Structure probing data (2A3 and DMS) for a 177-nucleotide construct.
RNA sequence: GGGAACGACUCGAGUAGAGUCGAAAAGCCGGAGGAGCAAAGGUGAUUAGAGACCCCUGUAGUUCCGGCCGUAAACUAUGCCAACUGGGUGUUACGUAGUGGUACCCACGAGAAAUCAAGUAUAUGGGUUACGAAUCAAGUUCGCUUGAUUCGUAACAAAAGAAACAACAACAACAAC
Reactivity to 2A3 in 0.01 (KOAc 150mM, MgCl2 10mM, bicine 150mM(pH8.5), 24C), signal-to-noise 2, nucleotides 027 to 126: g000c010c040g050g000a020g030g060a100g000c020a050a080a000g050g010u070g010a100u050u210a120g070a060g050a220c000c000c000c000u000g100u100a050g080u070u000c000c000g010g020c000c000g000u040a030a040a030c050u050a060u200g020c020c010a010a050c050u020g000g020g030u020g010u020u010a010c090g110u160a070g010u040g030g000u000a000c000c020c010a000c010g050a050g070a040a050a010u160c050a070a060g040u030a050u020a020u230g160g040
Reactivity to DMS in 0.01 (KOAc 150mM, MgCl2 10mM, bicine 150mM(pH8.5), 24C), signal-to-noise 2, nucleotides 027 to 126: g030c020c010g000g000a040g010g010a300g000c020a010a090a050g010g000u010g000a130u000u010a160g020a300g000a110c060c010c010c020u000g010u000a130g020u000u020c010c000g000g010c010c010g000u000a020a070a020c030u000a060u000g000c070c060a030a280c300u010g000g020g020u000g010u000u000a040c010g030u010a040g010u000g000g020u000a020c010c000c000a030c070g000a270g010a050a040a100u000c070a060a070g000u020a030u000a100u000g010g000
Conditions: 150 mM KOAc, 10 mM MgCl2 and 150 mM bicine (pH 8.5), 24 C. For DMS, 1,421 sequencing reads were counted. For 2A3, 1,381 sequencing reads were counted.